[RMDB]
RNA sequence: GGGAACGACUCGAGUAGAGUCGAAAAGAUAUGGAGUAGUUUGACAUCGAUCUACGACUCGUUACGUAACAUCACUCGGAAACGAGUGUGGUAACGAGUCGUAGGGAGUCGCACUACUCCUAAGUCAGCUUUGUAGAAUCUUCGGAUUCUACAAAGCAAAAGAAACAACAACAACAAC
Reactivity to DMS in 0.01 (KOAc 150mM, MgCl2 10mM, bicine 150mM(pH8.5), 24C), signal-to-noise 2, nucleotides 027 to 126: g010a140u010a300u010g010g000a030g010u000a010g000u000u000u020g010a020c000a300u020c240g000a090u030c010u010a010c010g020a010c000u000c000g000u010u000a000c000g040u020a080a190c220a070u000c040a000c000u000c010g000g000a050a120a210c000g000a010g020u000g000u010g010g000u000a000a000c000g010a000g000u000c000g000u000a010g000g010g010a020g040u010c000g040c300a020c000u000a010c000u000c020c010u000a010a080g030u000c040a150
Reactivity to 2A3 in 0.01 (KOAc 150mM, MgCl2 10mM, bicine 150mM(pH8.5), 24C), signal-to-noise 2, nucleotides 027 to 126: g040a000u080a070u270g010g000a000g030u010a000g000u070u040u190g110a070c120a300u300c240g170a110u010c010u000a010c020g000a000c010u020c010g020u030u030a020c080g100u190a220a090c050a300u300c030a020c000u000c050g070g000a050a140a080c050g010a020g000u040g000u000g000g020u000a000a000c000g000a000g080u020c000g000u000a010g010g010g000a010g000u020c000g030c010a000c000u000a000c000u000c010c010u000a020a000g040u040c100a020